Description: The record gives the reactivity of an RNA of 177 nucleotides to DMS and 2A3.
[RMDB]
RNA sequence: GGGAACGACUCGAGUAGAGUCGAAAAACGUACUUAAGCUGGUGCAUCCGUAUUUGCGCCAAAAUUUGUACCGAAUUUUUUGAACUCGUUACGCCGCUAUUUAUUACAGAAUGAAUUUAAAGCGUAACUCUCAGUAGUAGUUCGCUACUACUGAGAGAAAAGAAACAACAACAACAAC
Reactivity to DMS in 0.01 (KOAc 150mM, MgCl2 10mM, bicine 150mM(pH8.5), 24C), signal-to-noise 8, nucleotides 027 to 126: a090c210g000u010a000c000u000u000a000a020g000c300u000g010g020u000g000c010a010u010c210c270g000u050a100u020u010u000g010c010g000c010c000a000a030a300a160u000u000u000g010u000a000c040c050g030a080a010u000u000u000u000u020u000g010a100a130c060u010c050g000u010u010a000c000g000c000c020g000c300u000a010u010u000u000a020u000u020a150c300a110g010a070a040u000g010a020a020u010u010u010a100a170a100g000c010g000u000a010a040
Reactivity to 2A3 in 0.01 (KOAc 150mM, MgCl2 10mM, bicine 150mM(pH8.5), 24C), signal-to-noise 9, nucleotides 027 to 126: a000c010g000u010a000c000u020u010a010a010g010c020u000g000g010u000g000c000a030u070c090c060g130u170a260u120u100u030g000c000g000c000c000a010a000a020a050u010u010u010g000u000a010c010c020g070a060a060u070u040u020u030u050u170g090a090a050c030u020c080g020u010u000a010c010g000c010c010g000c050u020a030u030u050u010a050u040u050a100c060a070g240a170a040u050g010a010a010u110u150u140a180a040a000g010c000g000u010a010a020

Reactivities are given for positions 27 through 126.